Chemical mapping of a 177-nucleotide RNA with 2A3 and DMS. Values cover nucleotides 27 to 126. Source: RMDB library OK1LIB, as collected in RNAgym.
[RMDB]
RNA sequence: GGGAACGACUCGAGUAGAGUCGAAAACGAUGACGCUAGUGCACUAGCAGAUGUCCUGCUAGACGACCUCGAGCCUAGGAUAACGGAGCGUUGAUAGAGCAUGUGCAUCAAUGCUGGACACAGGCGGAGAUGUAAUGUCGUUCGCGAUAUUGCAUCUAAAAGAAACAACAACAACAAC
Reactivity to 2A3 in 0.01 (KOAc 150mM, MgCl2 10mM, bicine 150mM(pH8.5), 24C), signal-to-noise 9, nucleotides 027 to 126: c060g100a140u220g090a010c020g010c030u050a040g020u030g050c090a060c190u010a000g000c000a010g010a030u050g040u040c010c010u000g000c000u010a020g020a070c010g030a050c000c000u020c010g040a040g030c010c040u100a080g070g030a090u070a120a030c050g060g000a030g020c030g010u010u020g050a120u080a080g130a000g010c020a030u100g050u110g020c000a000u010c000a020a130u040g000c000u010g010g010a010c010a000c010a020g030g000c000g010g020
Reactivity to DMS in 0.01 (KOAc 150mM, MgCl2 10mM, bicine 150mM(pH8.5), 24C), signal-to-noise 9, nucleotides 027 to 126: c080g010a110u030g010a110c030g010c010u000a110g010u010g000c100a120c010u000a010g040c010a040g000a060u020g000u020c120c020u000g000c010u000a050g000a120c080g000a060c040c000u000c030g010a110g010c050c050u020a090g010g010a100u030a070a100c090g010g010a030g000c060g010u000u000g000a090u010a070g010a050g010c030a040u020g000u030g000c030a030u000c020a050a060u020g000c010u000g010g000a300c050a020c040a300g000g000c020g000g000